Chemical mapping of a 177-nucleotide RNA with DMS and 2A3. For 2A3, 3,469 sequencing reads were counted. The data come from the RNA Mapping Database (RMDB), library OK2TST. Conditions: 150 mM KOAc, 10 mM MgCl2 and 150 mM bicine (pH 8.5), 24 C.
RNA sequence: GGGAACGACUCGAGUAGAGUCGAAAAGAAAGAAACUUACAGCACUUGAAGAUGACGUCGAUAACACUGGUAGGAGGUUACAGAUAGCCAACAAGAAGGCUAGACAUUUUAACAACAGUGCUUGAAACAUCAUCAGUACGUUCGCGUACUGAUGAUGAAAAGAAACAACAACAACAAC
Reactivity to DMS in 0.01 (KOAc 150mM, MgCl2 10mM, bicine 150mM(pH8.5), 24C), signal-to-noise 3, nucleotides 027 to 126: g020a100a060a090g000a110a070a070c090u010u010a160c220a060g010c030a050c030u010u010g020a090a150g020a040u000g020a100c130g010u010c040g020a180u020a050a030c040a070c040u010g010g000u000a070g020g010a070g020g000u010u000a030c130a100g000a080u000a010g010c010c010a040a120c140a060a140g000a090a100g000g000c010u000a040g000a070c060a030u000u000u000u000a050a070c120a060a150c100a000g000u000g000c040u000u010g010a150a060a130
Reactivity to 2A3 in 0.01 (KOAc 150mM, MgCl2 10mM, bicine 150mM(pH8.5), 24C), signal-to-noise 3, nucleotides 027 to 126: g140a020a100a010g060a050a090a000c030u040u110a050c050a030g000c010a000c010u070u050g060a090a010g020a080u050g020a030c030g010u040c030g030a060u040a040a040c090a010c060u020g090g020u070a070g040g160a030g040g020u030u010a010c020a000g060a040u030a000g010c000c000a040a080c010a110a100g180a120a010g050g000c000u010a020g000a000c010a030u110u130u030u070a080a020c050a000a000c010a040g000u010g000c000u030u090g030a040a040a000